An RNA of 177 nucleotides, treated with DMS and 2A3 and read out base by base.
RNA sequence: GGGAACGACUCGAGUAGAGUCGAAAAGUCCGAGCCGAAAGGCAGGACAAGUCGCAUGGGCCGAAUAAAAGGCCAGAGACACAUGCAGGGACGGAAAAUAAGAACGUCCCAAGGCCCGAAAGGGCCACUCUAGAGUACGGUUCGCCGUACUCUAGAGAAAAGAAACAACAACAACAAC
Reactivity to DMS in 0.01 (KOAc 150mM, MgCl2 10mM, bicine 150mM(pH8.5), 24C), signal-to-noise 2, nucleotides 027 to 126: g010u000c010c000g010a160g070c030c000g020a100a020a190g000g010c030a300g000g000a010c030a060a110g000u000c120g030c080a060u010g000g000g000c000c000g020a220a170u120a030a190a160a190g000g020c000c000a110g050a150g010a140c250a280c000a030u000g010c000a150g000g000g010a020c010g000g000a120a150a130a060u070a120a140g030a090a080c010g000u020c000c000c000a100a030g050g000c000c010c000g000a110a160a020g000g000g000c000c060a030
Reactivity to 2A3 in 0.01 (KOAc 150mM, MgCl2 10mM, bicine 150mM(pH8.5), 24C), signal-to-noise 4, nucleotides 027 to 126: g000u010c000c000g010a050g040c000c000g070a080a010a000g010g000c020a010g000g000a000c020a030a030g210u210c090g010c060a020u020g040g010g010c000c020g040a080a040u180a170a180a060a030g000g000c000c010a000g000a010g010a010c020a000c000a100u060g000c050a080g000g000g040a000c000g060g050a210a040a080a020u210a090a090g030a110a050c010g000u000c000c010c000a010a030g000g000c020c000c000g000a040a050a010g000g010g000c000c000a010
The reactions ran in a buffer of 150 mM KOAc, 10 mM MgCl2 and 150 mM bicine (pH 8.5), at 24 C. Reactivities are given for positions 27 through 126. Values are in units of 0.01, from 0 to 300, in steps of 10. The data come from the RNA Mapping Database (RMDB), library OK1LIB. The DMS profile rests on 2,476 reads. As a SHAPE reagent, 2A3 marks flexible, mostly unpaired nucleotides at the ribose 2'-OH.